RNA sequence: GGGAACGACUCGAGUAGAGUCGAAAACUAUUUUCCGUCAUUGUUAAGGACAUGUGGGGGGAAAUGGAGGCCACAGGUACUUAGGGGGACCAGGUUUAAACAAUGAGUUUGCAACAAGCUGGAAGGACCUUAUUAAUGAGUUCGCUCAUUAAUAAGGAAAAGAAACAACAACAACAAC
Reactivity to DMS in 0.01 (KOAc 150mM, MgCl2 10mM, bicine 150mM(pH8.5), 24C), signal-to-noise 9, nucleotides 027 to 126: c080u000a070u000u000u000u000c010c010g010u000c040a050u000u000g010u000u010a100a120g010g010a060c070a050u000g030u010g000g010g000g010g010g000a030a050a050u010g010g000a110g010g010c040c050a050c100a060g000g010u000a030c100u000u010a100g010g000g000g000g010a120c050c030a050g000g010u000u000u000a060a060a060c070a050a060u000g010a080g010u000u000u000g000c090a060a070c130a050a090g010c040u000g010g010a090a090g010g010a180
Reactivity to 2A3 in 0.01 (KOAc 150mM, MgCl2 10mM, bicine 150mM(pH8.5), 24C), signal-to-noise 4, nucleotides 027 to 126: c040u030a090u080u070u040u030c040c060g190u030c040a070u040u050g030u070u090a130a080g090g010a040c030a060u100g010u060g030g020g000g000g010g010a010a060a040u060g040g000a020g040g000c020c010a030c010a040g050g030u050a060c040u080u170a050g030g000g010g010g000a000c000c020a010g010g010u020u080u080a050a070a010c010a010a010u040g010a020g060u020u050u070g010c000a030a040c000a060a030g000c010u010g010g010a020a000g050g010a010